[RMDB]
RNA sequence: GGGAACGACUCGAGUAGAGUCGAAAAGAGCGUGUUGGGGUGGACUCGUUCAGCACCACUGGUGAUGCCCAGGACGUUGCCGAGGUCGAGGCCUUCUAUGUCGGCAUCUGUUGUCUUGCGGACGGCCCAUAAAUGCGGGAUUCGUCCCGCAUUUAUGAAAAGAAACAACAACAACAAC
Reactivity to 2A3 in 0.01 (KOAc 150mM, MgCl2 10mM, bicine 150mM(pH8.5), 24C), signal-to-noise 3, nucleotides 027 to 126: g030a020g010c070g000u040g040u100u070g040g010g010g030u050g060g040a050c030u020c050g040u110u040c030a020g010c020a040c030c000a090c060u070g040g030u070g040a090u200g040c020c000c010a020g010g040a010c030g030u050u040g030c010c010g020a020g020g030u070c030g030a050g030g120c030c030u080u070c050u080a130u100g160u040c000g030g000c010a020u010c070u090g160u130u070g000u020c030u030u050g020c020g010g020a040c030g020g000c000c030
Reactivity to DMS in 0.01 (KOAc 150mM, MgCl2 10mM, bicine 150mM(pH8.5), 24C), signal-to-noise 6, nucleotides 027 to 126: g010a060g000c050g010u000g010u000u000g010g010g000g030u000g000g000a080c050u000c060g020u000u000c040a100g010c070a100c040c030a130c110u010g000g000u000g010a110u010g010c060c020c040a070g000g000a050c060g010u010u000g010c100c020g010a060g010g000u000c080g010a090g000g000c070c050u000u010c060u000a060u000g010u000c030g000g000c020a030u000c080u010g020u010u010g010u000c070u000u000g000c080g010g010a060c040g010g000c030c030